Structure probing data (DMS and 2A3) for a 177-nucleotide construct. Source: RMDB library OK1LIB, as collected in RNAgym. Values cover nucleotides 27 to 126.
RNA sequence: GGGAACGACUCGAGUAGAGUCGAAAAAUAGUCUUGGGAGUGGGGAAACCCACAUCUGGUAUCUAAACCGCGCCUCGCUGCUUACGAGGACGGCCCGAAGUCCAGAACCGCUUAAAACGCGGGUGACCCUCCAUAUACAAUUCGUUGUAUAUGGAGGAAAAGAAACAACAACAACAAC
Reactivity to DMS in 0.01 (KOAc 150mM, MgCl2 10mM, bicine 150mM(pH8.5), 24C), signal-to-noise 5, nucleotides 027 to 126: a130u030a060g000u010c040u010u020g010g010g030a100g050u010g000g000g000g000a110a080a180c000c010c010a020c040a070u020c000u010g000g010u010a030u000c020u010a040a150a100c020c020g000c080g040c000c000u000c010g020c170u020g000c210u050u010a150c020g010a010g020g000a090c010g000g000c000c000c020g010a090a120g000u000c000c000a000g000a100a120c010c000g000c010u000u010a070a050a120a110c300g000c000g020g010g010u010g010a090c100
Reactivity to 2A3 in 0.01 (KOAc 150mM, MgCl2 10mM, bicine 150mM(pH8.5), 24C), signal-to-noise 8, nucleotides 027 to 126: a000u100a030g030u030c040u050u100g090g010g020a140g000u020g000g000g010g030a050a050a060c000c000c000a010c000a020u000c000u000g020g000u010a020u020c010u020a010a020a030c000c000g050c100g050c110c000u020c010g040c080u260g070c090u270u190a050c020g000a000g000g010a010c000g010g000c000c010c040g010a020a010g030u000c000c000a000g010a050a080c000c000g000c010u060u080a060a100a040a030c050g000c000g010g010g020u040g040a050c000
Record summary: Conditions: 150 mM KOAc, 10 mM MgCl2 and 150 mM bicine (pH 8.5), 24 C.